RNA sequence: GGGAACGACUCGAGUAGAGUCGAAAACCGUCAGCAAGGGUCCAAGGUAGACGAACUCGUCGACCACCUCGAACGUAUCCCCGUCUAUCGUAGCACUGCUACCUAGGCGAGCCCUGUCGCGCUCGAAUAGGGCGAGUAUGUUCGCAUACUCGCCCUAAAAAGAAACAACAACAACAAC
Reactivity to DMS in 0.01 (KOAc 150mM, MgCl2 10mM, bicine 150mM(pH8.5), 24C), signal-to-noise 3, nucleotides 027 to 126: c060c010g030u010c110a140g000c050a080a030g010g030g010u010c040c090a100a080g020g000u000a070g000a080c030g000a080a120c180u010c130g020u000c010g030a040c020c040a270c130c000u000c030g020a030a130c020g020u000a110u000c010c000c000c050g020u010c000u000a010u010c190g000u010a010g030c010a200c240u000g000c020u000a020c000c050u000a020g010g000c030g010a120g010c010c010c060u010g030u000c060g000c120g000c040u000c070g040a080a080
Reactivity to 2A3 in 0.01 (KOAc 150mM, MgCl2 10mM, bicine 150mM(pH8.5), 24C), signal-to-noise 1, nucleotides 027 to 126: c020c000g090u080c020a070g020c090a070a010g100g000g000u120c040c020a000a020g100g060u020a040g050a060c010g010a090a090c030u000c110g010u020c000g000a020c010c010a060c000c040u040c000g000a090a020c030g000u040a300u140c010c000c000c010g020u000c000u050a040u080c070g000u000a010g020c050a100c300u220g070c000u000a020c000c000u010a000g000g000c000g000a020g010c020c000c010u080g010u140c060g050c000g030c060u040c000g110a110a090